[RMDB]
RNA sequence: GGGAACGACUCGAGUAGAGUCGAAAAAGCUACUUGCCGAUCAAGCUCGGAUCCGAGUUGAAGGAUCCAUACAAGUAUAGGGAUCCAACAGAUUCUUACAGAUCGGAUCCUGUAUAAUCUGCGGCGCCUUUCCCGUAGCUUUCGAGCUACGGGAAAGAAAAGAAACAACAACAACAAC
Reactivity to DMS in 0.01 (KOAc 150mM, MgCl2 10mM, bicine 150mM(pH8.5), 24C), signal-to-noise 2, nucleotides 027 to 126: a030g010c020u000a040c050u010u000g010c000c010g010a140u000c160a110a100g020c110u000c220g010g020a040u000c020c000g010a070g040u010u000g030a060a300g000g010a010u000c000c000a070u010a050c130a050a160g040u040a180u000a050g010g000g000a000u000c000c000a030a300c040a050g000a110u000u000c050u020u010a100c130a070g000a050u000c030g010g010a020u000c010c000u020g000u000a020u000a040a070u030c090u010g020c030g000g000c100g000c230
Reactivity to 2A3 in 0.01 (KOAc 150mM, MgCl2 10mM, bicine 150mM(pH8.5), 24C), signal-to-noise 1, nucleotides 027 to 126: a000g030c020u050a020c020u080u180g010c020c000g040a110u150c060a030a020g100c010u030c050g010g040a010u000c000c000g030a020g010u060u050g090a030a030g000g040a000u000c020c000a000u000a010c020a020a200g150u100a090u120a150g040g000g010a000u000c000c010a020a010c040a050g050a060u180u010c010u130u210a210c140a060g030a080u010c000g000g000a020u010c000c030u030g000u030a030u010a040a030u140c010u010g040c040g010g000c000g070c000
Record summary: Source: RMDB library OK2TST, as collected in RNAgym. Structure probing data (DMS and 2A3) for a 177-nucleotide construct. For DMS, 888 sequencing reads were counted. Reactivities are given for positions 27 through 126.